[RMDB]
RNA sequence: GGGAACGACUCGAGUAGAGUCGAAAAGAUUUCGCAAUGCCGCCAUGAGUGUCGCCUGUUCGCGUCGAAGGAUCGAUCUGUUUUCGAUCAUAUAUCAGUUUCGGUAUAGCAAUCAUCAAAGAUCGCACAUCGCAUAAGUGUUCGCACUUAUGCGAUGAAAAGAAACAACAACAACAAC
Reactivity to DMS in 0.01 (KOAc 150mM, MgCl2 10mM, bicine 150mM(pH8.5), 24C), signal-to-noise 2, nucleotides 027 to 126: g010a140u000u010u010c100g040c040a150a090u000g000c010c040g020c150c110a120u000g010a070g000u010g000u000c030g010c020c010u000g000u010u000c080g020c050g000u010c060g020a070a220g010g010a040u000c030g000a010u000c190u010g000u020u000u000u000c040g020a030u000c040a110u000a060u010a090u000c030a050g030u000u000u000c090g000g000u010a010u010a060g040c100a080a030u000c050a060u000c160a050a120a110g020a020u000c050g000c160a210
Reactivity to 2A3 in 0.01 (KOAc 150mM, MgCl2 10mM, bicine 150mM(pH8.5), 24C), signal-to-noise 1, nucleotides 027 to 126: g030a020u040u000u110c060g000c070a010a050u060g000c020c030g000c020c020a090u090g050a020g080u150g000u060c000g030c010c060u150g040u130u150c080g020c020g000u020c030g060a070a060g170g000a030u020c000g000a020u000c060u180g250u190u070u000u040c000g020a000u030c030a010u090a000u020a020u120c010a040g030u050u100u080c010g010g000u060a000u040a080g020c000a020a010u050c010a010u060c080a090a080a000g040a040u000c020g000c040a040